Chemical mapping of a 177-nucleotide RNA with DMS.
Source: RMDB library TTRDEL, as collected in RNAgym.
The DMS profile rests on 1,208 reads.

RNA sequence: GGGAACGACUCGAGUAGAGUCGAAAAGAUAUGGAAGAGUCCGAUAAGAAGCCAUCGGAAACGAUGGGCUUCUUUUGACGGAUGAUUCCUAAGUCAAAAGGGAUCCACAGUUCGCUGUGGAUCCCAAUCACAAAGAAGUCUUCGGACUUCUUUGUGAAAAAGAAACAACAACAACAAC
Reactivity to DMS in 0.01 (KOAc 150mM, MgCl2 10mM, bicine 150mM(pH8.5), 24C), signal-to-noise 2, nucleotides 027 to 126: g000a020u010a300u000g000g000a020a020g000a300g010u000c000c000g000a160u010a000a010g000a020a020g000c000c000a020u000c000g000g000a110a110a070c010g010a000u000g000g000g020c000u000u000c000u000u000u000u000g010a200c110g000g020a020u000g010a300u000u020c000c020u000a040a130g000u020c000a050a060a110a160g010g010g030a010u020c000c000a010c000a020g000u000u020c270g030c000u010g010u000g000g000a000u010c000c010c000a000a000